This 177-nucleotide RNA was probed chemically with DMS and 2A3. For DMS, 1,560 sequencing reads were counted. For 2A3 the reverse transcriptase was SuperScript II with manganese.
[RMDB]
RNA sequence: GGGAACGACUCGAGUAGAGUCGAAAAUAAAUUUGGUAGUUUGGAAGGCAUUUACGAGCAUAUUGAUGGAUUCAAGGCCUCAAAAAUGAAAGAAAACUUGAUCAAUGACCGUGACCAAGCUUUCCUAAUGAUUACCCUCGUUCGCGAGGGUAAUCAUAAAAGAAACAACAACAACAAC
Reactivity to DMS in 0.01 (KOAc 150mM, MgCl2 10mM, bicine 150mM(pH8.5), 24C), signal-to-noise 1, nucleotides 027 to 126: u000a080a090a060u030u020u000g020g000u000a000g060u010u010u010g000g000a110a070g030g020c010a010u010u030u030a110c100g000a020g020c050a050u030a150u080u000g020a040u040g030g000a080u020u060c170a030a040g000g000c140c000u060c020a030a020a070a060a110u030g000a040a060a070g000a140a020a020a110c020u000u060g000a050u000c070a000a020u000g000a050c000c080g000u040g000a070c110c070a020a050g030c020u000u000u000c000c020u000a000
Reactivity to 2A3 in 0.01 (KOAc 150mM, MgCl2 10mM, bicine 150mM(pH8.5), 24C), signal-to-noise 2, nucleotides 027 to 126: u140a060a010a030u130u130u010g100g000u010a040g000u000u000u030g040g000a070a030g050g000c030a020u040u030u040a060c010g010a000g100c030a000u000a080u210u040g010a090u290g040g000a010u220u000c010a020a020g300g000c000c000u000c030a030a030a000a000a020u250g120a020a130a140g170a010a130a000a000c010u010u040g040a060u210c050a000a000u030g100a250c020c000g020u100g050a120c000c090a000a000g000c000u120u080u030c020c000u020a080
Reactivities are given for positions 27 through 126. High 2A3 reactivity points to a flexible backbone, as in loops and unpaired stretches.